RNA sequence: GGGAACGACUCGAGUAGAGUCGAAAACACAUCAAACAGCUUAUCACCUUGAUCAAGUGGGCUUCAUCCCUGGGAUGCAAGGCUGGUUCAAUAUAUGCAAAUCAAUAAAUGUAAUCCAGCAUAUAAACAGAACCAAAGACAAAAACCACAUGAUUAACGAUAGCCACUCAUUCGUGAGUGGCUAUCGAAAAGAAACAACAACAACAAC
Reactivity to 2A3 in 0.01 (KOAc 150mM, MgCl2 10mM, bicine 150mM(pH8.5), 24C), signal-to-noise 2, nucleotides 027 to 156: c090a000c000a020u180c110a020a100a100c030a060g060c030u100u150a050u160c030a080c050c020u040u040g020a020u050c020a040a120g010u030g000g040g020c010u050u050c000a050u070c000c010c050u180g060g060g000a010u070g080c070a010a000g000g000c020u000g000g000u010u010c030a080a010u020a000u000a000u000g050c040a050a090a040u100c060a000a080u110a230a150a130u110g050u110a100a050u050c100c030a030g000c040a000u000a000u000a000a240a020c080a010g000a010a000c040c000a040a080a020g110a020c090a030a100a040a010a000c030c020a020c040a070u070g000a030u070u010a070a000